[RMDB]
RNA sequence: GGGAACGACUCGAGUAGAGUCGAAAAAAAGGAAUUAACGUUUUUUGGUAAAAUGUGCUAAUGUAAAGAGUGAGAAGAUUAGUGAUACAUAAUGAAAGCAAUGCAUUCUUUCACAUGGAAAUGGGAACGCUCUUUACACAUUCGUGUGUAAAGAGCGAAAAGAAACAACAACAACAAC
Reactivity to 2A3 in 0.01 (KOAc 150mM, MgCl2 10mM, bicine 150mM(pH8.5), 24C), signal-to-noise 4, nucleotides 027 to 126: a000a000a000g090g020a050a100u130u050a100a010c040g010u020u000u040u030u040u050g100g050u150a070a000a020a000u080g030u090g040c050u060a070a020u110g050u140a030a010a010g100a040g060u060g010a060g000a110a070g050a090u030u110a030g000u010g080a020u060a120c040a020u150a080a040u140g050a060a000a010g090c090a080a020u120g020c040a080u020u020c000u000u000u000c050a060c010a010u050g020g010a060a170a000u070g010g050g050a080a000
Reactivity to DMS in 0.01 (KOAc 150mM, MgCl2 10mM, bicine 150mM(pH8.5), 24C), signal-to-noise 3, nucleotides 027 to 126: a060a040a050g000g000a080a050u000u010a090a140c160g000u000u000u020u000u010u010g020g020u020a050a030a070a040u020g010u030g010c090u010a040a040u000g020u030a040a020a060g000a060g010u000g010a020g010a020a080g010a080u000u010a050g010u020g010a130u030a070c100a060u040a050a090u000g010a050a040a090g000c130a060a060u040g000c060a040u000u010c000u000u000u000c060a010c030a030u000g000g030a040a090a020u000g020g010g000a110a180
Chemical mapping of a 177-nucleotide RNA with 2A3 and DMS. For DMS the reverse transcriptase was MarathonRT. 2A3 adducts were read by reverse transcription with SuperScript II with manganese. The data come from the RNA Mapping Database (RMDB), libraries RFM100 and RFMREP. The RNA was probed in 150 mM KOAc, 10 mM MgCl2 and 150 mM bicine (pH 8.5) at 24 C.